This 170-nucleotide RNA was probed chemically with 2A3 and DMS.
DMS adducts were read by reverse transcription with MarathonRT.

RNA sequence: GGGAACGACUCGAGUAGAGUCGAAAAUAUAUCUGUUAAACCAGAGAGUACAGCUGAUCAAGAGACUUAUGGUGGAGCUUCAGUGUGUCUCUAUUGCCGUGCGCAUAUAGAACAUCCUGAUGUCUCUAAGCACAGGCCUUCGGGCCUGUGAAAAGAAACAACAACAACAAC
Reactivity to 2A3 in 0.01 (KOAc 150mM, MgCl2 10mM, bicine 150mM(pH8.5), 24C), signal-to-noise 3, nucleotides 027 to 129: u150a010u000a000u000c010u000g010u000u130a050a050a040c070c010a000g060a000g000a010g050u080a020c040a020g040c040u030g080a080u150c070a020a020g120a020g010a040c000u140u200a130u160g090g030u070g020g000a000g030c000u000u000c010a010g000u000g000u000g010u020c020u030c000u190a010u000u000g000c010c010g200u160g100c220g000c050a000u010a000u000a270g030a030a020c000a000u000c000c000u020g020a000u020g010u000c000u000c000u010a050a000g000
Reactivity to DMS in 0.01 (KOAc 150mM, MgCl2 10mM, bicine 150mM(pH8.5), 24C), signal-to-noise 3, nucleotides 027 to 129: u050a050u020a090u000c090u050g070u030u070a090a200a110c140c030a070g000a080g030a140g010u060a050c070a040g020c020u030g040a100u060c090a140a080g000a090g040a000c020u040u070a090u050g050g000u020g040g030a020g020c010u110u000c000a000g010u050g000u000g020u050c120u020c000u020a000u000u000g040c050c020g090u060g010c180g060c010a000u110a030u000a030g020a000a000c030a010u010c180c010u030g020a030u000g000u000c010u030c010u020a000a070g160